Chemical mapping of a 207-nucleotide RNA with DMS and 2A3. For DMS the reverse transcriptase was MarathonRT.
[RMDB]
RNA sequence: GGGAACGACUCGAGUAGAGUCGAAAAUUAUUACAUCUCUUUCUUAUUACAUAUCACUGAAUCCACCAUAAAUACCCACAAUUACUCAGUUCCAGCUGGAAACGGUGUAACACUUGUAGACUUUCUUAACAGCACAACAGAUUUUCGGGAUGGUACACUAACUCCUAUCGUUCGCGAUAGGAGUUAGAAAAGAAACAACAACAACAAC
Reactivity to DMS in 0.01 (KOAc 150mM, MgCl2 10mM, bicine 150mM(pH8.5), 24C), signal-to-noise 1, nucleotides 027 to 156: u000u000a130u000u000a070c040a120u000c010u000c020u010u020u010c020u020u000a130u010u010a110c020a110u000a100u020c000a100c030u020g000a130a170u010c010c020a030c040c050a200u020a100a130a160u010a140c030c000c020a070c060a030a110u000u000a070c040u000c060a080g000u000u000c040c010a110g060c070u000g060g000a120a030a160c020g000g010u020g030u000a050a020c100a050c110u000u000g020u000a070g000a140c070u010u000u000c010u010u000a090a090c040a070g030c070a060c010a020a100c040a150g000a140u020u000u000u000c080g000g030g020a030u010g020g010u020a090c010a280
Reactivity to 2A3 in 0.01 (KOAc 150mM, MgCl2 10mM, bicine 150mM(pH8.5), 24C), signal-to-noise 2, nucleotides 027 to 156: u070u040a030u030u150a070c010a140u040c050u020c000u080u090u010c070u120u100a170u100u040a090c060a050u200a070u110c050a050c040u040g050a030a040u050c030c000a010c010c010a030u060a140a160a030u090a120c010c010c000a020c090a070a040u090u070a010c060u060c130a010g030u030u060c020c000a040g000c090u050g010g010a070a070a000c010g000g000u000g010u040a150a040c040a040c050u030u080g010u110a020g030a130c010u010u120u010c020u120u070a150a050c090a060g100c060a030c020a250a000c020a120g050a120u050u140u130u130c030g020g010g010a040u070g000g040u090a010c010a000
The RNA was probed in 150 mM KOAc, 10 mM MgCl2 and 150 mM bicine (pH 8.5) at 24 C.
Source: RMDB library OK3TST, as collected in RNAgym.